[RMDB]
RNA sequence: GGGAACGACUCGAGUAGAGUCGAAAAAUUCGAUAAGCCGUCAGUGUCCGAUAGGGUACUGAUUGUGAUGACGACUAGAAAGUCAGCGGGUGGAAGCAUCUGUGCGUGGGUUAGGUAGCCUCAUAUAUAAGUAUAGAAUGUUCGCAUUCUAUACUUAAAAAGAAACAACAACAACAAC
Reactivity to DMS in 0.01 (KOAc 150mM, MgCl2 10mM, bicine 150mM(pH8.5), 24C), signal-to-noise 9, nucleotides 027 to 126: a110u010u010c030g010a080u010a130a230g000c020c040g010u000c000a010g010u000g000u000c000c010g010a180u050a110g010g000g010u010a010c010u000g000a010u010u010g020u000g000a100u010g010a100c050g000a070c120u010a100g010a080a090a110g010u000c020a060g020c060g000g000g020u010g000g000a100a080g010c060a040u010c060u010g010u010g010c070g010u010g000g000g010u000u010a050g010g010u010a070g010c030c030u010c060a050u020a060u020a120
Reactivity to 2A3 in 0.01 (KOAc 150mM, MgCl2 10mM, bicine 150mM(pH8.5), 24C), signal-to-noise 9, nucleotides 027 to 126: a000u060u040c010g020a020u030a140a020g020c010c000g010u000c000a000g000u010g020u010c010c010g080a270u290a270g010g000g020u020a010c000u000g000a000u000u030g020u030g020a060u080g040a020c030g010a010c020u050a060g120a120a100a020g020u030c020a010g040c020g040g020g020u060g020g040a060a030g040c020a040u020c030u080g060u040g030c030g030u060g020g040g000u030u060a040g010g070u030a020g020c010c010u040c050a010u070a010u030a020